[RMDB]
This 177-nucleotide RNA was probed chemically with 2A3 and DMS.
It was measured as part of the RMDB library OK1LIB.
The DMS profile rests on 8,173 reads.
For 2A3 the reverse transcriptase was SuperScript II with manganese.
For DMS the reverse transcriptase was MarathonRT.
RNA sequence: GGGAACGACUCGAGUAGAGUCGAAAAUAGGUAACCAAGCAAAAGCGGGUGACCUGUGUGUUGCGAUGACAUCAACAUCCGUCAGGUCUUUGCAAGCAAAAGUAACUGCAUCUGCAAGAGUGAUGAGACAAAAGAACUUCUUCGGAAGUUCUUUUGUAAAAGAAACAACAACAACAAC
Reactivity to 2A3 in 0.01 (KOAc 150mM, MgCl2 10mM, bicine 150mM(pH8.5), 24C), signal-to-noise 4, nucleotides 027 to 126: u160a010g050g010u040a040a020c010c040a070a050g030c030a080a170a210a020g040c030g010g000g020u050g040a030c000c000u020g030u030g000u000g000u030u060g030c080g070a150u040g030a060c010a060u110c030a030a040c010a040u030c020c010g070u070c020a010g030g070u010c000u040u070u030g030c020a020a000g000c000a010a020a100a090g120u140a050a090c060u050g010c010a040u010c030u060g010c030a040a030g030a040g100u100g030a070u110g020a030g030
Reactivity to DMS in 0.01 (KOAc 150mM, MgCl2 10mM, bicine 150mM(pH8.5), 24C), signal-to-noise 5, nucleotides 027 to 126: u020a010g000g010u030a080a040c010c000a070a100g020c040a130a090a090a160g010c040g000g000g010u000g000a030c020c000u000g030u000g000u010g000u000u010g000c140g010a110u020g000a110c090a300u020c070a050a090c160a040u030c020c050g020u010c020a010g000g020u000c000u000u040u010g010c010a020a050g010c060a020a070a090a170g020u030a100a070c200u010g000c000a030u010c100u000g000c040a030a030g000a050g000u000g000a030u010g000a120g000